[RMDB]
The data come from the RNA Mapping Database (RMDB), library OK2TST. The record gives the reactivity of an RNA of 177 nucleotides to DMS and 2A3. For DMS the reverse transcriptase was MarathonRT. The 2A3 profile rests on 1,592 reads. The reactions ran in a buffer of 150 mM KOAc, 10 mM MgCl2 and 150 mM bicine (pH 8.5), at 24 C. 2A3 adducts were read by reverse transcription with SuperScript II with manganese.
RNA sequence: GGGAACGACUCGAGUAGAGUCGAAAAUAUGAAGAUUCACAACCGGGGACGCUGAAUGAUUUUCUCUGUGCCAUGACGGAGGAUGAUGCCCGGCCGGAGGUGCUGCGUCGUCUUGAACUGAUGGUGGACUACUAUCCGAGUUCGCUCGGAUAGUAGUAAAAGAAACAACAACAACAAC
Reactivity to DMS in 0.01 (KOAc 150mM, MgCl2 10mM, bicine 150mM(pH8.5), 24C), signal-to-noise 3, nucleotides 027 to 126: u000a060u020g020a110a110g000a110u000u010c040a100c070a090a160c070c070g030g000g010g010a060c080g000c090u000g020a100a100u020g010a120u000u020u010u000c020u010c010u000g020u010g010c040c060a070u000g000a080c070g010g020a080g010g010a040u010g010a080u030g000c030c060c060g000g030c020c030g010g010a090g010g000u010g020c050u010g010c040g010u000c030g010u000c030u000u000g020a090a070c110u000g010a040u020g000g010u000g010g010
Reactivity to 2A3 in 0.01 (KOAc 150mM, MgCl2 10mM, bicine 150mM(pH8.5), 24C), signal-to-noise 2, nucleotides 027 to 126: u300a140u080g050a060a080g050a110u120u050c040a030c010a140a110c090c020g000g040g020g000a020c050g000c110u050g080a050a050u120g030a110u090u060u140u000c030u000c020u010g090u120g040c010c040a050u100g060a030c010g040g020a000g030g010a030u080g030a040u100g050c000c030c000g010g000c010c020g040g020a040g020g040u110g030c030u040g000c010g000u020c000g070u000c020u000u100g050a060a030c020u050g040a020u050g120g070u050g010g000